[RMDB]
RNA sequence: GGGAACGACUCGAGUAGAGUCGAAAAUCGCAAAACCGCGGCAAGUGGAGUUAGCGAGAGGAGGCUGGGUUUUGGCUUCCUGAAGCAAUCGGUCACCGAGAAGGUGUGGUCGUUACCGUGAAAUUCCGUGACAAAAUAACGUUCGCGUUAUUUUGAACCUGAAGUUACUCUUCGGAGUAACUUCAGGAAAAGAAACAACAACAACAAC
Reactivity to 2A3 in 0.01 (KOAc 150mM, MgCl2 10mM, bicine 150mM(pH8.5), 24C), signal-to-noise 1, nucleotides 027 to 156: u020c000g000c020a010a060a060a060c040c020g010c000g100g060c130a240a090g010u030g020g010a080g020u050u050a080g020c020g000a050g010a040g100g030a010g000g020c030u090g100g000g140u080u070u220u190g080g010c000u010u010c010c000u030g000a050a010g080c020a020a100u020c010g040g000u000c000a000c000c030g080a160g190a170a150g060g060u190g020u040g110g000u030c000g000u010u060a040c020c080g000u030g040a020a030a080u110u030c040c030g040u020g030a030c010a000a010a000a000u000a000a010c000g000u010u010c250g010c000g080u010u010a010u010u000u010u030g050a060a060